[RMDB]
RNA sequence: GGGAACGACUCGAGUAGAGUCGAAAAAGCACGCGGAGGCUUCUUUGGUUCCCUCCAUAAUCUGAGUCAAGGAAAAUUUAAUUGGCAACAAUGAGUAUGCUCUCGCUGCCUAAUCGAAGUAUAGUAGAUUACUGGCUUUAUUCCUUUACAAGGUAGAGGUAUACGCUAACUUCGGUUAGCGUAUACCAAAAGAAACAACAACAACAAC
Reactivity to 2A3 in 0.01 (KOAc 150mM, MgCl2 10mM, bicine 150mM(pH8.5), 24C), signal-to-noise 2, nucleotides 027 to 156: a000g040c020a020c060g090c120g120g010a070g060g030c050u070u050c020u250u230u150g010g040u040u110c010c020c030u050c090c020a110u090a110a040u040c020u020g000a010g020u030c020a000a000g010g040a020a050a050a050u050u150u110a170a130u190u100g030g020c000a020a020c020a130a170u150g020a000g100u110a060u140g010c020u010c010u040c030g000c030u020g020c000c010u030a000a050u020c020g000a010a000g050u170a010u090a300g020u010a020g000a020u000u020a040c040u070g010g000c000u010u000u040a080u010u000c000c000u020u120u020a020c060a030a030g000g000u040a060g070a050